[RMDB]
RNA sequence: GGGAACGACUCGAGUAGAGUCGAAAAAAUGUGUUCAUCAGCUACAAAACAGGAGAGAUGAUAACUCAUUAUGUAUAUGUGAUGAUAAACAGAGACAAUAUAUUGAAGAGCUUAUAUGAGUGGCAGACACGGGACAUGCUUCCCUGUGGCUGGCCAAUAUAAUGCCACUGUUCGCAGUGGCAUUAUAAAAAGAAACAACAACAACAAC
Reactivity to DMS in 0.01 (KOAc 150mM, MgCl2 10mM, bicine 150mM(pH8.5), 24C), signal-to-noise 2, nucleotides 027 to 156: a100a070u000g020u000g030u000u000c040a110u010c020a070g030c060u000a140c060a100a090a070a130c100a080g000g010a190g010a110g020a120u000g010a130u000a120a120c060u010c010a090u010u000a090u020g010u000a060u010a100u000g030u000g040a100u000g010a080u000a060a060a080c030a100g020a100g030a100c060a050a100u000a050u000a080u020u000g010a100a110g000a090g020c070u000u000a050u000a060u000g020a160g020u010g000g020c000a090g000a020c030a010c010g000g000g010a030c050a060u000g050c150u000u010c030c000c020u020g040u000g020g010c020u000g060g000c000c000a020a150
Reactivity to 2A3 in 0.01 (KOAc 150mM, MgCl2 10mM, bicine 150mM(pH8.5), 24C), signal-to-noise 4, nucleotides 027 to 156: a000a000u090g030u000g030u020u040c010a020u000c020a030g050c030u080a050c070a050a130a110a050c060a070g140g020a080g020a010g010a030u110g000a020u100a140a050c010u010c010a030u050u120a060u170g040u020a080u010a030u170g080u030g040a050u020g020a030u130a070a100a020c030a000g040a000g060a070c030a090a020u040a010u030a070u160u140g030a090a050g030a020g090c080u200u030a020u060a030u260g090a050g130u100g010g000c000a000g000a020c000a000c010g000g010g000a020c040a050u170g060c140u070u020c000c000c050u100g000u000g010g000c000u000g020g000c000c000a000a000

The record gives the reactivity of an RNA of 207 nucleotides to DMS and 2A3.
For DMS the reverse transcriptase was MarathonRT.
The RNA was probed in 150 mM KOAc, 10 mM MgCl2 and 150 mM bicine (pH 8.5) at 24 C.
It was measured as part of the RMDB library OK3TST.
Values are in units of 0.01, from 0 to 300, in steps of 10.
For DMS, 4,679 sequencing reads were counted.
For 2A3, 2,115 sequencing reads were counted.